[RMDB]
RNA sequence: GGGAACGACUCGAGUAGAGUCGAAAAGAUCGGCGGUGCCUGCACGUCGACCAGGUGCACGUGCUACACGGCCCAAGGCACGGAUGCCGGCCUCGAUGACAUGCAGUGUCGGGAGUGGAUCAGGAAGGCGUGAACUAGGGUUCGCCCUAGUUCACGCAAAAGAAACAACAACAACAAC
Reactivity to DMS in 0.01 (KOAc 150mM, MgCl2 10mM, bicine 150mM(pH8.5), 24C), signal-to-noise 2, nucleotides 027 to 126: g000a090u010c050g020g010c020g050g030u010g000c000c050u000g060c010a060c010g010u000c000g010a050c090c030a140g000g000u000g030c300a090c050g000u000g050c020u040a140c140a130c110g010g000c010c000c040a180a040g010g000c030a010c070g030g020a110u000g000c000c060g010g010c000c020u020c100g040a170u000g020a040c080a080u010g000c120a080g000u010g000u010c000g000g000g000a070g050u000g000g010a050u000c020a110g020g000a090a110g000
Reactivity to 2A3 in 0.01 (KOAc 150mM, MgCl2 10mM, bicine 150mM(pH8.5), 24C), signal-to-noise 1, nucleotides 027 to 126: g050a090u070c020g000g050c050g010g020u070g020c000c000u000g000c000a040c010g060u040c050g020a090c020c030a110g070g000u080g010c070a000c120g000u010g000c010u040a020c080a020c090g100g000c020c010c000a030a020g040g000c010a010c020g040g000a080u120g050c030c040g010g050c000c040u000c030g070a070u100g050a000c000a070u130g030c030a010g120u000g030u140c060g060g010g000a070g040u130g000g040a030u060c020a010g020g090a030a030g110